[RMDB]
RNA sequence: GGGAACGACUCGAGUAGAGUCGAAAAUGCUGUCGUUGACAGCGCCCAACGCUUCACAACCUGAAAGAAGCGCCUGUUAUCAAGACGGUUGAUCCAUUUACCGGUGCAGACCUCUGCAAACACCGGGUUUAACAAGCAUCUUUCGAGAUGCUUGUAAACAUAUCCCCACGUUCGCGUGGGGAUAUGUAAAAGAAACAACAACAACAAC
Reactivity to DMS in 0.01 (KOAc 150mM, MgCl2 10mM, bicine 150mM(pH8.5), 24C), signal-to-noise 2, nucleotides 027 to 156: u000g040c000u010g000u000c030g040u000u010g070a040c000a010g070c000g000c150c120c000a060a020c010g010c010u000u010c030a220c030a100a240c110c040u030g000a060a190a220g020a030a020g010c000g000c030c060u010g020u000u000a080u030c110a060a050g000a100c050g000g010u000u000g030a180u010c100c020a190u000u000u010a070c040c010g000g020u000g050c010a130g000a230c200c050u000c060u000g030c050a240a140a030c000a020c020c020g010g000g010u000u000u000a120a030c000a000a030g000c010a040u010c000u000u010u010c250g040a110g010a010u000g010c000u000u000g010u010a000a070
Reactivity to 2A3 in 0.01 (KOAc 150mM, MgCl2 10mM, bicine 150mM(pH8.5), 24C), signal-to-noise 1, nucleotides 027 to 156: u150g000c010u000g000u050c070g300u100u250g020a010c010a000g000c000g060c000c000c000a010a000c020g000c000u000u020c050a090c020a240a090c020c020u060g000a000a060a050g010a030a020g000c010g050c000c010u180g090u160u120a120u250c090a120a000g060a030c050g020g000u030u030g040a110u050c020c040a030u090u060u110a070c000c000g060g000u020g000c000a000g060a290c040c090u120c060u160g040c100a190a060a030c020a000c000c010g000g030g000u050u110u050a010a000c000a000a000g000c000a000u000c010u010u110u180c190g080a000g000a000u000g010c010u000u000g000u000a000a000